[RMDB]
This 177-nucleotide RNA was probed chemically with DMS and 2A3. The RNA was probed in 150 mM KOAc, 10 mM MgCl2 and 150 mM bicine (pH 8.5) at 24 C.
RNA sequence: GGGAACGACUCGAGUAGAGUCGAAAAGCAACGGGAGGGAGGCCGGAAGCGCGAACCGGCCAAACGCGCACCAUGCAAAGAGCACAAAAAGAAGUUGAAGUGCUCACAACUUCACCCUCCCAACAAAAUGAUGCACAUUUUUCGAAAUGUGCAUCAUAAAAGAAACAACAACAACAAC
Reactivity to DMS in 0.01 (KOAc 150mM, MgCl2 10mM, bicine 150mM(pH8.5), 24C), signal-to-noise 1, nucleotides 027 to 126: g000c090a080a040c300g000g000g000a030g000g020g020a140g050g000c000c020g020g000a030a100g030c020g060c060g010a190a210c000c020g030g000c000c000a040a050a030c070g040c060g000c040a100c150c130a040u030g030c050a010a100a100g010a050g030c040a020c090a060a200a170a140a060g020a040a070g010u010u010g000a160a070g010u000g000c010u000c000a120c030a050a100c000u010u000c040a150c000c010c000u000c000c000c000a050a040c080a030a060a030
Reactivity to 2A3 in 0.01 (KOAc 150mM, MgCl2 10mM, bicine 150mM(pH8.5), 24C), signal-to-noise 1, nucleotides 027 to 126: g070c090a050a090c090g030g010g010a000g030g010g010a020g000g030c010c030g030g060a090a060g120c140g000c010g170a040a070c000c030g020g000c000c000a000a040a000c030g000c040g000c000a040c030c010a030u230g000c000a000a090a060g040a040g010c000a010c020a140a090a030a010a000g070a140a030g030u110u080g060a130a020g030u040g050c000u010c000a000c000a020a000c000u110u080c050a040c020c000c000u020c000c000c000a030a000c010a000a000a000